[RMDB]
The record gives the reactivity of an RNA of 207 nucleotides to DMS and 2A3. Values cover nucleotides 27 to 156. The DMS profile rests on 3,435 reads.
RNA sequence: GGGAACGACUCGAGUAGAGUCGAAAACUGUCACCGACGCUUUGUCUCCGGCUGACCCGCUGGACCCGGUGGUCCGGGCGCAGAUCGAUGCGCUGGUAGCGGCGAAGAUCAAACCGACGUCAGGCAGGGUCGCUGACGGCGCGAUCAUCGGGAUCGACAAACUGGUUAGAUUCGUCUAACCAGUUUGAAAAGAAACAACAACAACAAC
Reactivity to DMS in 0.01 (KOAc 150mM, MgCl2 10mM, bicine 150mM(pH8.5), 24C), signal-to-noise 2, nucleotides 027 to 156: c050u010g010u010c050a170c050c030g030a030c030g010c050u000u000u010g020u000c010u000c010c040g010g050c060u010g010a100c080c030c020g070c000u010g010g010a070c000c030c020g020g030u000g010g000u010c030c010g050g020g020c050g020c080a120g020a170u000c150g000a140u010g010c050g020c030u020g040g000u010a090g010c180g030g040c010g000a120a270g010a100u000c050a050a230a110c000c000g000a080c020g010u000c040a060g050g000c030a070g040g020g030u010c000g050c040u010g010a030c000g000g030c050g040c010g010a070u000c010a110u000c050g010g040g030a060u000c030g010a240
Reactivity to 2A3 in 0.01 (KOAc 150mM, MgCl2 10mM, bicine 150mM(pH8.5), 24C), signal-to-noise 3, nucleotides 027 to 156: c010u050g020u060c020a020c100c020g030a030c040g070c140u220u210u150g040u070c020u010c070c000g030g040c050u060g050a050c000c000c040g000c070u070g060g020a040c000c000c030g120g070u140g020g000u040c000c000g020g020g000c050g000c030a030g010a110u190c080g080a090u100g030c020g010c020u020g090g160u170a040g060c010g030g010c020g020a050a010g010a060u060c070a080a090a020c030c010g030a030c030g060u070c030a010g000g020c020a050g050g020g020u030c030g000c040u000g010a010c000g040g020c060g020c040g030a020u020c000a030u100c030g060g050g060a110u070c010g050a030